[RMDB]
Chemical mapping of a 177-nucleotide RNA with DMS and 2A3.
It was measured as part of the RMDB library OK2TRN.
For DMS, 1,029 sequencing reads were counted.
The RNA was probed in 150 mM KOAc, 10 mM MgCl2 and 150 mM bicine (pH 8.5) at 24 C.

RNA sequence: GGGAACGACUCGAGUAGAGUCGAAAACAGUGUGAACGUCAGCGAUGACACCAGCCUGCACGUGCACGGUCUGGCGGGAUACCUGGGUCCGUUCCAUGGGCACGACGACGUCGCCACCGUGACCGUGUCGGUUCCGGUUAUUCGUAACCGGAACCGAAAAAGAAACAACAACAACAAC
Reactivity to DMS in 0.01 (KOAc 150mM, MgCl2 10mM, bicine 150mM(pH8.5), 24C), signal-to-noise 1, nucleotides 027 to 126: c080a110g000u000g010u010g000a070a130c080g010u000c040a010g020c280g000a060u020g000a040c030a150c030c010a220g030c020c010u000g000c030a030c030g030u000g000c020a050c030g000g000u030c120u000g030g030c000g000g000g040a050u000a070c080c020u000g000g000g030u000c010c020g020u010u000c160c160a120u000g000g000g040c000a020c010g030a030c060g000a080c300g020u000c010g020c010c010a020c000c000g000u000g000a010c010c010g010u000g000
Reactivity to 2A3 in 0.01 (KOAc 150mM, MgCl2 10mM, bicine 150mM(pH8.5), 24C), signal-to-noise 2, nucleotides 027 to 126: c020a010g060u060g020u000g300a100a030c030g000u000c020a040g050c010g090a090u080g030a000c010a030c060c010a010g000c000c010u000g070c020a000c020g070u070g000c000a000c000g000g010u110c070u040g000g020c000g020g020g000a060u100a130c020c000u110g010g020g100u050c080c020g060u300u000c160c040a160u180g000g000g010c020a010c100g130a040c010g010a020c020g090u120c000g000c000c020a030c010c000g000u000g010a000c000c000g010u000g080